[RMDB]
RNA sequence: GGGAACGACUCGAGUAGAGUCGAAAAGAUAUGGAUCCUGCGAGCUUUUGACGCUCUCCAGGUCGGAAACGACCUGCGAGAGCGAUAAGCUCCAGGAUCCUAAGUCAAACAUCCCUUCGGGGAUGAACAACACUAUCAUCUUCGGAUGAUAGUGUUGAAAAGAAACAACAACAACAAC
Reactivity to 2A3 in 0.01 (KOAc 150mM, MgCl2 10mM, bicine 150mM(pH8.5), 24C), signal-to-noise 2, nucleotides 027 to 126: g030a010u040a020u100g010g020a020u020c000c020u080g110c300g050a010g030c040u120u200u300u300g270a190c300g000c000u000c000u070c010c000a010g010g020u000c000g000g010a040a050a000c010g000a010c000c000u000g010c080g000a000g000a010g000c000g000a010u000a010a000g000c000u000c000c000a010g010g000a000u000c000c010u000a000a000g000u000c000a010a040a040c010a000u030c000c000c000u040u030c300g010g000g000g020a000u020g010a040a040
Reactivity to DMS in 0.01 (KOAc 150mM, MgCl2 10mM, bicine 150mM(pH8.5), 24C), signal-to-noise 4, nucleotides 027 to 126: g000a050u000a280u000g000g000a010u000c000c000u010g010c290g010a000g010c000u000u000u000u000g020a230c100g020c010u000c010u010c000c000a000g000g020u000c010g010g000a080a080a140c010g020a020c000c000u000g000c210g020a020g020a010g040c000g030a000u000a000a020g000c000u000c010c010a000g000g000a000u000c000c000u000a000a040g000u000c010a150a190a270c020a000u000c000c000c000u000u010c170g030g010g010g000a010u000g000a090a200
Background: Structure probing data (2A3 and DMS) for a 177-nucleotide construct. It was measured as part of the RMDB library TTRDES. Conditions: 150 mM KOAc, 10 mM MgCl2 and 150 mM bicine (pH 8.5), 24 C. For 2A3, 5,359 sequencing reads were counted. The DMS profile rests on 6,091 reads. DMS adducts were read by reverse transcription with MarathonRT.